RNA sequence: GGGAACGACUCGAGUAGAGUCGAAAAAGCCAUGAUUGGUGUCUGCUUGCAUGUUGAGCUAGUAGUUGUAAACCUAGUGAGCCAGACUACUCUAGGAUGACUUCUAAGUCAUAGGCAUGUGUGAUAGGUGAGCGGUGAUAUUCGUAUCACCGCUCACAAAAGAAACAACAACAACAAC
Reactivity to DMS in 0.01 (KOAc 150mM, MgCl2 10mM, bicine 150mM(pH8.5), 24C), signal-to-noise 2, nucleotides 027 to 126: a090g010c020c010a090u000g030a140u010u010g010g010u000g010u000c060u000g000c000u000u000g020c010a050u000g030u010u010g020a160g020c020u010a040g020u000a040g000u000u000g000u060a050a070a260c000c020u000a060g000u000g020a050g010c040c130a140g010a300c050u000a060c040u000c050u020a040g000g000a220u000g010a030c000u010u010c090u000a030a080g010u000c030a060u000a030g010g000c030a020u000g020u000g020u000g000a100u000a120g030
Description
This 177-nucleotide RNA was probed chemically with DMS. Values cover nucleotides 27 to 126. Conditions: 150 mM KOAc, 10 mM MgCl2 and 150 mM bicine (pH 8.5), 24 C. The DMS profile rests on 1,171 reads. The data come from the RNA Mapping Database (RMDB), library OK2TRN.